The data come from the RNA Mapping Database (RMDB), library OK2TST. This 177-nucleotide RNA was probed chemically with DMS and 2A3. For DMS the reverse transcriptase was MarathonRT. The RNA was probed in 150 mM KOAc, 10 mM MgCl2 and 150 mM bicine (pH 8.5) at 24 C. Reactivities are given for positions 27 through 126. The 2A3 profile rests on 1,473 reads. The DMS profile rests on 1,422 reads.

RNA sequence: GGGAACGACUCGAGUAGAGUCGAAAACAUGUUGGAAGCAUGGCGCAGCACGAAGGGUGAAAAGCCGCGCCUCGUGCACCGCAUCGACCGUGAUACAUCCGGCGUUCUGGUCGUGGCACGCACGCGAUAUGGAUGCACCAUUCGUGGUGCAUCCAUAAAAAGAAACAACAACAACAAC
Reactivity to DMS in 0.01 (KOAc 150mM, MgCl2 10mM, bicine 150mM(pH8.5), 24C), signal-to-noise 2, nucleotides 027 to 126: c090a070u010g010u000u000g010g000a120a170g010c090a040u000g000g020c150g020c010a060g000c000a050c100g010a040a100g000g010g040u010g000a090a080a100a130g020c070c020g010c080g010c020c020u000c020g020u000g020c000a110c220c100g010c070a090u000c030g000a040c020c000g020u000g000a140u000a090c100a090u000c060c040g000g020c050g010u000u000c030u020g000g000u000c020g030u010g010g010c080a130c140g020c280a060c070g030c100g010a060
Reactivity to 2A3 in 0.01 (KOAc 150mM, MgCl2 10mM, bicine 150mM(pH8.5), 24C), signal-to-noise 2, nucleotides 027 to 126: c060a020u060g040u070u160g160g050a140a010g070c060a010u060g030g000c020g030c000a040g040c010a030c030g150a110a120g080g010g020u130g050a010a130a120a030g070c040c010g020c010g030c000c020u020c020g000u000g030c000a030c060c070g000c010a030u050c010g110a130c000c010g110u110g000a060u090a210c050a110u030c040c030g070g010c030g030u030u000c020u060g000g000u100c070g020u010g120g000c000a000c150g060c010a040c010g060c010g020a040